[RMDB]
RNA sequence: GGGAACGACUCGAGUAGAGUCGAAAACGUAAGUUUCGUCCUAAAAGGACUCAUCAGGUAGCCUAAUAGACUACGACUUACGCGGUAGGUCGUGAAUAAGCCCGGAGUACAUUCCCAAUGGAACUAGGGACAUUAUUAUGUUCGCAUAAUAAUGUCCAAAAGAAACAACAACAACAAC
Reactivity to DMS in 0.01 (KOAc 150mM, MgCl2 10mM, bicine 150mM(pH8.5), 24C), signal-to-noise 7, nucleotides 027 to 126: c060g010u010a060a060g010u000u000u010c160g010u000c030c020u010a050a110a130a160g010g010a040c020u000c040a090u010c110a080g010g020u000a030g010c010c010u010a100a140u000a090g010a070c070u000a030c020g000a030c000u000u000a010c010g020c120g010g020u000a050g000g010u000c020g000u000g000a060a080u000a100a130g010c030c010c020g020g000a060g010u000a060c050a120u000u000c010c000c000a100a090u010g010g010a030a090c150u010a130g010
Reactivity to 2A3 in 0.01 (KOAc 150mM, MgCl2 10mM, bicine 150mM(pH8.5), 24C), signal-to-noise 6, nucleotides 027 to 126: c010g030u040a030a060g010u010u030u120c060g000u020c020c010u060a110a110a040a050g030g010a070c010u020c070a140u030c040a030g130g040u080a020g020c010c010u060a130a070u060a090g070a060c040u040a010c100g020a000c010u020u010a030c090g020c060g300g010u030a030g000g060u020c020g030u030g090a080a110u080a110a020g030c000c020c000g020g000a010g020u030a040c010a040u010u020c000c010c000a000a050u150g040g020a060a040c070u040a120g120